[RMDB]
RNA sequence: GGGAACGACUCGAGUAGAGUCGAAAAUGAUACUUAUAAGAGUCAAAAAAGGGGUGGAAGAGGUAUUUCAGCACUUACAACUAGAGAAGAAGAUUUUGUAAGGCACUUGGUAACUACAACUACUCAUAGUAGACUAUUAUUCUUUACAAAUAAAGGAUCAUAGUGAGUGAUUCGUCACUCACUAUGAAAAAGAAACAACAACAACAAC
Reactivity to 2A3 in 0.01 (KOAc 150mM, MgCl2 10mM, bicine 150mM(pH8.5), 24C), signal-to-noise 2, nucleotides 027 to 156: u060g030a000u060a090c020u090u110a040u060a300a080g010a010g020u020c030a000a060a000a060a100a060g040g020g000g010u070g010g010a040a010g010a010g060g000u020a070u000u100u080c050a030g000c020a000c080u040u030a020c020a070a010c040u070a060g010a000g030a220a000g010a050a010g010a040u090u120u040u090g010u020a000a030g000g000c010a010c080u080u030g070g000u040a030a010c010u060a040c030a030a030c020u060a000c000u020c050a020u060a080g010u020a000g030a020c020u020a040u160u000a020u110u070c000u020u020u050a070c070a020a110a030u130a080a110a020g030g010a010
Reactivity to DMS in 0.01 (KOAc 150mM, MgCl2 10mM, bicine 150mM(pH8.5), 24C), signal-to-noise 2, nucleotides 027 to 156: u000g000a210u000a080c030u010u000a140u000a100a220g000a110g000u010c030a000a060a110a100a060a120g010g010g010g030u000g000g000a060a080g010a100g000g000u000a030u000u000u010c070a060g000c050a100c050u000u010a050c040a050a150c080u010a100g020a090g010a040a100g000a150a140g010a160u000u000u010u010g010u020a020a060g040g000c040a040c100u000u010g010g000u000a060a080c030u000a020c070a050a160c020u000a040c030u000c060a160u030a090g010u010a080g010a060c020u010a010u000u010a060u000u000c010u000u020u010a190c010a030a060a090u010a020a040a090g050g010a120
Conditions: 150 mM KOAc, 10 mM MgCl2 and 150 mM bicine (pH 8.5), 24 C. Structure probing data (2A3 and DMS) for a 207-nucleotide construct. For 2A3 the reverse transcriptase was SuperScript II with manganese. It was measured as part of the RMDB library OK3TST. In probing experiments dimethyl sulfate is read out at A N1 and C N3, which are open when not base-paired.